Structure probing data (DMS) for a 177-nucleotide construct.
RNA sequence: GGGAACGACUCGAGUAGAGUCGAAAAGAUAUGGAAUAUAGAAACUGCCGUUUGACGUGGAUCGGAAACGAUCCACCGAGGAACUACAGUGCUAUAUUCCUAAGUCAGAGCUAGGUUCGCCUAGCAACUGUAUGGGUUUCUUCGGAAACCCAUACAGAAAAGAAACAACAACAACAAC
Reactivity to DMS in 0.01 (KOAc 150mM, MgCl2 10mM, bicine 150mM(pH8.5), 24C), signal-to-noise 1, nucleotides 027 to 126: g000a020u010a300u000g000g000a000a030u030a000u000a000g040a090a080a000c010u000g000c040c130g000u000u000u000g000a300c300g010u010g010g000a000u000c000g000g000a060a070a120c000g010a000u000c000c000a000c000c020g000a300g000g000a020a020c000u000a070c000a020g000u000g000c000u000a010u000a000u000u000c000c000u000a020a070g010u000c060a080g000a150g010c010u010a000g000g040u020u020c300g010c000c010u000a000g000c000a010a070
The DMS profile rests on 707 reads.